[RMDB]
Chemical mapping of a 177-nucleotide RNA with DMS and 2A3.
The 2A3 profile rests on 2,822 reads.
DMS adducts were read by reverse transcription with MarathonRT.
For 2A3 the reverse transcriptase was SuperScript II with manganese.
As a SHAPE reagent, 2A3 marks flexible, mostly unpaired nucleotides at the ribose 2'-OH.
RNA sequence: GGGAACGACUCGAGUAGAGUCGAAAACUUGGCCGCGCUCUUACCGGCAUCCGGGUGGUUCGGCGUGACGGCUCCGCCAUCGGUCCGUGGCGGUUGCUGGUCCGGGAUUUGGCGCACUUGGUGGACAGUUUUUAUCCCUCUUCGGAGGGAUAAAAACAAAAGAAACAACAACAACAAC
Reactivity to DMS in 0.01 (KOAc 150mM, MgCl2 10mM, bicine 150mM(pH8.5), 24C), signal-to-noise 1, nucleotides 027 to 126: c030u000u020g000g020c030c030g070c110g000c000u020c130u030u000a140c070c000g000g000c170a130u020c030c050g010g000g000u020g000g050u000u040c120g010g000c150g030u010g000a130c040g010g000c020u000c000c000g010c000c000a000u000c050g000g000u000c010c010g000u010g030g000c000g010g000u010u000g020c000u000g000g000u000c020c050g000g000g050a130u080u040u000g000g000c020g010c030a180c040u030u010g010g020u000g010g000a040c140a120
Reactivity to 2A3 in 0.01 (KOAc 150mM, MgCl2 10mM, bicine 150mM(pH8.5), 24C), signal-to-noise 4, nucleotides 027 to 126: c030u030u060g090g000c040c030g010c020g030c010u030c040u120u120a080c010c020g010g000c050a050u060c030c010g050g050g030u120g040g120u140u090c030g030g030c070g110u150g020a020c030g010g000c030u000c000c010g010c000c000a030u080c100g080g010u030c030c020g000u010g000g030c000g010g020u070u130g000c010u090g020g060u030c000c020g040g030g020a050u090u080u210g030g000c010g000c030a060c030u050u090g070g000u010g050g020a020c030a050